Background
The record gives the reactivity of an RNA of 177 nucleotides to 2A3 and DMS. The 2A3 profile rests on 22,775 reads. Values cover nucleotides 27 to 126. For 2A3 the reverse transcriptase was SuperScript II with manganese. It was measured as part of the RMDB library M2PK50. Conditions: 150 mM KOAc, 10 mM MgCl2 and 150 mM bicine (pH 8.5), 24 C. DMS adducts were read by reverse transcription with MarathonRT.
[RMDB]
RNA sequence: GGGAACGACUCGAGUAGAGUCGAAAAGCCCAUAUGUUCGCAUAUGGGCAAAAGCAGAUCUGAGCAUGCGUGCUCUCUGCGACAAAAGUCAACGCAAUAAAAAAACACGUCACUUCGGUGACGUGAAGCAUAUCUUAUGGUUCGCCAUAAGAUAUGCAAAAGAAACAACAACAACAAC
Reactivity to 2A3 in 0.01 (KOAc 150mM, MgCl2 10mM, bicine 150mM(pH8.5), 24C), signal-to-noise 8, nucleotides 027 to 126: g000c000c010c000a000u010a000u000g020u000u050c230g000c120a000u010a000u010g010g010g000c030a030a040a000a010g000c000a000g010a050u080c090u230g000a000g000c020a030u050g010c050g100u010g000c000u000c000u010c000u000g000c000g020a020c050a010a160a020a010g110u130c060a050a070c050g020c080a070a110u230a230a120a030a000a000a010a010c010a000c000g000u000c000a000c020u030u080c220g090g000u010g000a000c000g000u000g000a010a000
Reactivity to DMS in 0.01 (KOAc 150mM, MgCl2 10mM, bicine 150mM(pH8.5), 24C), signal-to-noise 5, nucleotides 027 to 126: g000c000c000c000a010u000a000u000g000u000u020c220g020c010a010u000a010u000g010g010g020c010a010a010a040a100g010c000a000g010a130u010c200u010g000a020g030c000a030u010g000c070g000u000g000c010u000c000u000c000u000g000c010g000a120c160a060a050a070a120g010u010c120a050a230c020g020c070a080a110u050a020a000a030a090a080a070a120c010a010c000g010u000c000a000c000u000u000c210g030g010u000g000a010c000g010u000g000a010a070